RNA sequence: GGGAACGACUCGAGUAGAGUCGAAAAUCAGGACUGUUCGCAGUCCUGAAAACCCAGACCCCAAUCCACCCAUCGACUCUAGGACGGAACCCAGCCAGGGAAAAAGGAGGGUGUUCGCACCCUCCAAGCUAUUAAUACAGUUCGCUGUAUUAAUAGCAAAAGAAACAACAACAACAAC
Reactivity to DMS in 0.01 (KOAc 150mM, MgCl2 10mM, bicine 150mM(pH8.5), 24C), signal-to-noise 6, nucleotides 027 to 126: u000c010a010g010g000a030c000u000g010u010u010c220g030c010a020g010u000c000c000u010g000a010a010a100a150c020c000c010a130g000a220c040c010c010c030a090a090u010c050c040a070c030c020c030a130u000c030g000a040c010u000c010u000a060g000g000a100c090g010g010a080a080c030c010c020a080g010c050c050a070g000g000g010a030a050a070a110a110g000g000a030g000g010g020u000g000u010u010c140g020c010a020c000c000c000u000c000c000a010a030
Reactivity to 2A3 in 0.01 (KOAc 150mM, MgCl2 10mM, bicine 150mM(pH8.5), 24C), signal-to-noise 3, nucleotides 027 to 126: u030c000a000g010g000a000c000u010g030u070u060c190g010c100a000g000u010c000c000u000g010a010a010a000a000c000c010c010a010g090a060c010c010c000c000a010a050u020c020c010a020c010c020c000a050u040c010g040a030c010u030c010u050a030g040g060a020c030g020g040a050a050c000c000c000a010g050c020c020a040g030g030g050a040a060a040a030a030g010g000a000g000g010g000u000g030u010u040c160g020c040a000c000c000c000u000c000c000a000a000
Structure probing data (DMS and 2A3) for a 177-nucleotide construct.
The reactions ran in a buffer of 150 mM KOAc, 10 mM MgCl2 and 150 mM bicine (pH 8.5), at 24 C.
DMS adducts were read by reverse transcription with MarathonRT.
The DMS profile rests on 9,264 reads.
Reactivities are given for positions 27 through 126.